[RMDB]
RNA sequence: GGGAACGACUCGAGUAGAGUCGAAAAUGCGAUUUUAGCAGGUGGAAGAGGGUAGCAAUAACAGGUCCGUGAUGCCCUUUAGAUGCUCUGGGCUGCACGCGUGCUACAAUGUUAGGAUCAAUAGGACUGCGAGCCUGAGAGGGUGCGCUACUCUUAUCACCUUCCAAGGGUUCGCCCUUGGAAGGUGAAAAGAAACAACAACAACAAC
Reactivity to 2A3 in 0.01 (KOAc 150mM, MgCl2 10mM, bicine 150mM(pH8.5), 24C), signal-to-noise 2, nucleotides 027 to 156: u110g000c000g070a010u020u000u010u090a040g030c000a010g030g070u050g000g140a020a040g100a100g050g030g000u060a000g020c050a020a190u220a150a050c010a100g080g000u020c000c010g000u050g000a030u110g000c000c000c000u070u070u020a130g020a060u170g000c070u000c040u090g040g010g000c000u050g060c000a000c040g040c020g040u020g040c000u010a000c050a040a060u090g000u060u030a030g010g060a110u020c020a040a150u120a120g020g010a000c040u010g000c000g020a020g000c000c020u030g020a070g000a020g020g010g020u000g000c020g000c030u140a080c020u000c020u000u000a050u000